The record gives the reactivity of an RNA of 177 nucleotides to 2A3 and DMS. It was measured as part of the RMDB library OK1LIB. The reactions ran in a buffer of 150 mM KOAc, 10 mM MgCl2 and 150 mM bicine (pH 8.5), at 24 C. DMS adducts were read by reverse transcription with MarathonRT.
RNA sequence: GGGAACGACUCGAGUAGAGUCGAAAAGGCGGAGUCCAGAGGAGUCAGCUCAUCGGUGUAGGUCUUAACGCGGAUGCGCGAAUUGUAGCGCAGCGAGAGCAAAUUGUAGACCACCUCGAAUCGGUUCCACGAGUAUACGUUUCGACGUAUACUCGUGAAAAGAAACAACAACAACAAC
Reactivity to 2A3 in 0.01 (KOAc 150mM, MgCl2 10mM, bicine 150mM(pH8.5), 24C), signal-to-noise 9, nucleotides 027 to 126: g040g000c030g030g020a030g060u030c040c040a040g070a100g130g010a020g100u040c030a020g020c030u050c090a150u030c060g030g000u070g030u080a090g030g020u020c000u060u080a070a030c030g000c010g070g080a160u100g040c010g000c020g040a140a170u190u200g100u230a040g010c010g000c010a010g020c010g010a060g010a000g030c040a030a060a070u140u160g060u030a010g000a000c000c010a040c020c010u000c000g010a020a030u020c010g040g010u030u000c010
Reactivity to DMS in 0.01 (KOAc 150mM, MgCl2 10mM, bicine 150mM(pH8.5), 24C), signal-to-noise 5, nucleotides 027 to 126: g010g020c030g010g010a060g010u000c030c030a140g030a130g010g020a080g010u010c070a050g010c020u010c030a230u000c010g000g020u020g000u020a080g020g010u000c030u010u010a070a100c070g010c010g010g020a120u020g000c020g030c000g000a070a150u030u030g020u020a180g020c020g060c010a020g000c020g020a120g020a170g010c070a060a070a120u040u010g010u010a120g010a010c010c020a150c120c010u000c020g000a020a050u000c010g010g000u010u000c020